[RMDB]
RNA sequence: GGGAACGACUCGAGUAGAGUCGAAAAAGCGUGACUACGGUCACGCAAAAGCUGACGGGGUGUAAUGACAAUCAUAUGACGAUGUCAAUGCACCGCGUUGGCUCCAAGCCAGCUUACGAGCUGGCAAGUAGGGAUACGGCUUCGGCCGUAUCCCUACAAAAGAAACAACAACAACAAC
Reactivity to 2A3 in 0.01 (KOAc 150mM, MgCl2 10mM, bicine 150mM(pH8.5), 24C), signal-to-noise 2, nucleotides 027 to 126: a000g050c030g000u020g000a020c020u110a140c300g050g000u000c000a000c000g030c000a040a000a000a000g000c000u000g020a000c000g000g000g150g000u000g000u000a030a000u000g000a020c050a020a300u000c010a050u230a090u300g140a110c200g020a010u030g020u000c000a000a020u090g000c000a000c000c000g110c000g000u010u000g020g010c000u020c000c000a020a000g000c000c000a000g000c000u060u110a130c160g050a010g000c010u000g000g030c000a000a010
An RNA of 177 nucleotides, treated with 2A3 and read out base by base. The reactions ran in a buffer of 150 mM KOAc, 10 mM MgCl2 and 150 mM bicine (pH 8.5), at 24 C. It was measured as part of the RMDB library RFM100.